[RMDB]
RNA sequence: GGGAACGACUCGAGUAGAGUCGAAAACUUGAGUGAUACUAUCUAGCUUAAGUUUUAGUCAUCUUUGGUAGUGUAGUUUUAAGACUUGACGCACCUUAAAGUGAAGUUUAGUCUAGUCAAAUUUGUAAGUUUUGGAAGAUGAGCGGAAUUUGAUGAAUCGAUCCUUUUAGUUCGCUAAAAGGAUCGAAAAAGAAACAACAACAACAAC
Reactivity to DMS in 0.01 (KOAc 150mM, MgCl2 10mM, bicine 150mM(pH8.5), 24C), signal-to-noise 2, nucleotides 027 to 156: c010u000u000g010a010g010u010g010a300u000a100c020u000a030u000c020u000a300g010c000u000u020a010a020g010u010u000u010u010a060g020u000c160a080u000c100u000u000u030g010g050u010a000g040u010g020u000a080g000u000u000u010u000a030a100g000a020c010u010u020g010a010c020g010c090a050c040c010u000u000a050a070a040g020u010g000a130a040g020u010u010u010a040g010u010c040u000a110g000u000c020a000a030a060u000u020u000g000u000a060a220g080u000u000u040u010g030g000a130a120g010a070u010g010a150g000c030g020g000a020a030u000u000u000g000a070u010g010a090a160
Reactivity to 2A3 in 0.01 (KOAc 150mM, MgCl2 10mM, bicine 150mM(pH8.5), 24C), signal-to-noise 6, nucleotides 027 to 156: c000u000u010g000a000g000u030g010a010u010a090c010u010a010u020c000u010a010g010c000u010u000a010a000g020u010u000u010u090a080g030u040c070a140u060c220u180u170u140g010g000u000a010g000u010g020u030a040g020u010u030u040u070a050a020g000a010c000u010u010g000a000c000g000c010a000c010c000u030u100a060a070a020g010u010g040a080a020g000u050u120u200a010g000u000c000u010a000g010u010c000a010a020a040u050u050u050g090u090a090a150g010u030u050u130u140g060g030a070a050g020a080u110g020a010g030c040g010g040a010a020u030u020u030g020a020u030g010a010a050
Source information
An RNA of 207 nucleotides, treated with DMS and 2A3 and read out base by base. Reactivities are given for positions 27 through 156. It was measured as part of the RMDB library ARCHII. For 2A3, 5,678 sequencing reads were counted.